The record gives the reactivity of an RNA of 177 nucleotides to 2A3. For 2A3 the reverse transcriptase was SuperScript II with manganese. The RNA was probed in 150 mM KOAc, 10 mM MgCl2 and 150 mM bicine (pH 8.5) at 24 C.
RNA sequence: GGGAACGACUCGAGUAGAGUCGAAAAUUGGCAGCUGUGGGAUCCCAGUCCAGGUGUCUUUAACUAGAUGUGGAUGGACUGGUUGAUUUUGUCGGCCUUGAUAGGGGACGAAACCACGAGUCAAGCGCUGAUCCUCGGACUUCGGUCCGAGGAUCAGAAAAGAAACAACAACAACAAC
Reactivity to 2A3 in 0.01 (KOAc 150mM, MgCl2 10mM, bicine 150mM(pH8.5), 24C), signal-to-noise 1, nucleotides 027 to 126: u040u280g010g000c010a120g010c100u060g090u040g000g030g100a120u080c100c000c000a000g000u000c000c000a050g090g000u210g070u000c000u090u090u050a210a190c300u040a040g000a000u020g080u150g150g130a220u000g040g000a000c020u000g100g000u030u150g000a070u000u000u150u100g000u000c010g060g290c000c000u100u030g180a210u180a160g000g000g000g050a000c030g000a120a000a000c070c000a000c000g000a000g000u040c030a000a000g000c040g030